[RMDB]
RNA sequence: GGGAACGACUCGAGUAGAGUCGAAAACUAGUAGGAAUCACCCGAAUGAUGGGAACAAUGAGGUUAAACGUAUUCUAAGAUGAGGAAAGUCUUGAAUUUCAUACUAGCGAUGUUCUAUGUCUUGGGACUUUCUAUGAACUUUCGAGUUCAUAGAAAGAAAAGAAACAACAACAACAAC
Reactivity to 2A3 in 0.01 (KOAc 150mM, MgCl2 10mM, bicine 150mM(pH8.5), 24C), signal-to-noise 6, nucleotides 027 to 126: c020u030a030g120u040a030g060g150a090a070u090c020a050c040c010c010g020a100a100u220g040a030u110g020g010g020a020a020c030a040a100u160g020a050g070g080u050u080a050a070a000c050g030u040a030u030u010c020u060a020a040g000a050u060g020a040g110g200a140a050a010g000u000c000u010u030g040a070a050u080u130u060c050a060u050a100c030u020a020g030c030g090a060u040g030u050u000c030u110a290u180g040u000c040u020u080g050g010g030a070
Reactivity to DMS in 0.01 (KOAc 150mM, MgCl2 10mM, bicine 150mM(pH8.5), 24C), signal-to-noise 6, nucleotides 027 to 126: c020u000a050g010u000a060g010g010a080a100u000c080a110c020c010c010g000a110a120u010g010a080u010g010g000g010a070a050c060a070a110u000g010a120g020g010u000u010a040a100a110c200g010u010a070u010u000c030u000a030a030g000a040u000g010a150g010g010a100a090a200g000u000c010u000u000g010a030a030u010u000u000c030a050u010a030c070u000a030g010c060g010a090u010g010u000u000c020u010a070u020g010u010c030u000u000g000g000g010a180

Chemical mapping of a 177-nucleotide RNA with 2A3 and DMS. The 2A3 profile rests on 6,302 reads. Reactivities are given for positions 27 through 126. It was measured as part of the RMDB library OK2TST.